The record gives the reactivity of an RNA of 177 nucleotides to DMS and 2A3. As a SHAPE reagent, 2A3 marks flexible, mostly unpaired nucleotides at the ribose 2'-OH. For DMS the reverse transcriptase was MarathonRT. 2A3 adducts were read by reverse transcription with SuperScript II with manganese. The DMS profile rests on 898 reads. It was measured as part of the RMDB library OK2TRN. High DMS reactivity at an A or C suggests that its Watson-Crick edge is free.

[RMDB]
RNA sequence: GGGAACGACUCGAGUAGAGUCGAAAAUAUUGCCUGAAACAGAACGCUUUUAUCCAAAUGGCAAUUUUGCAUCACACUUAAUUGGUAGAGCUCAGAAAAAUCCGGAUACUGGUGAACUUAAAGGUGCACUCUCAAUAAGCUUCGGCUUAUUGAGAGUAAAAGAAACAACAACAACAAC
Reactivity to DMS in 0.01 (KOAc 150mM, MgCl2 10mM, bicine 150mM(pH8.5), 24C), signal-to-noise 2, nucleotides 027 to 126: u000a040u000u010g010c010c000u030g020a100a110a080c290a110g000a060a160c110g000c060u000u000u000u000a090u000c060c040a060a120a050u000g000g010c090a020a090u000u000u000u000g010c090a060u000c030a090c080a030c060u000u000a060a110u030u000g000g010u000a080g000a190g020c030u000c060a080g000a010a020a040a060a120u000c020c020g000g060a040u000a030c050u020g000g020u030g010a050a100c060u010u000a040a130a070g000g020u000g020c210
Reactivity to 2A3 in 0.01 (KOAc 150mM, MgCl2 10mM, bicine 150mM(pH8.5), 24C), signal-to-noise 1, nucleotides 027 to 126: u100a020u050u090g040c000c000u000g000a060a040a000c020a040g050a040a030c020g000c010u040u030u080u100a040u030c000c040a020a160a240u110g050g000c000a030a020u050u030u120u040g040c020a080u090c020a020c010a020c050u040u190a140a150u220u040g050g010u060a080g020a010g000c010u010c070a020g150a050a120a010a040a000u140c060c020g140g000a020u020a030c000u030g030g020u020g020a020a020c030u040u070a150a070a000g030g010u070g040c010